Chemical mapping of a 177-nucleotide RNA with 2A3. For 2A3, 1,563 sequencing reads were counted. It was measured as part of the RMDB library OK1LIB. The reactions ran in a buffer of 150 mM KOAc, 10 mM MgCl2 and 150 mM bicine (pH 8.5), at 24 C.
[RMDB]
RNA sequence: GGGAACGACUCGAGUAGAGUCGAAAAGCAUGAUGCUACGGCAUCAUGCAAGUACGAAAGUACAAAGGAGCAAAAGCAUCGGCUCCUAAAAACGAUGCAAAAACGACCGCUAUACGUAGCGGUCGAAUGACCCUAUGCCUUUCGAGGCAUAGGGUCAAAAAGAAACAACAACAACAAC
Reactivity to 2A3 in 0.01 (KOAc 150mM, MgCl2 10mM, bicine 150mM(pH8.5), 24C), signal-to-noise 2, nucleotides 027 to 126: g000c000a000u000g010a000u000g000c000u020a080c250g130g000c000a000u020c000a000u030g000c000a000a000g000u000a030c000g020a030a020a010g020u000a010c050a080a270a070g000g000a000g030c030a180a000a150a000g000c010a000u010c080g030g000c000u000c000c010u110a030a030a000a000a000c000g000a000u000g000c100a000a000a140a000a000c000g000a000c000c000g000c000u000a000u030a160c200g090u010a020g000c030g010g000u000c050g000a000a000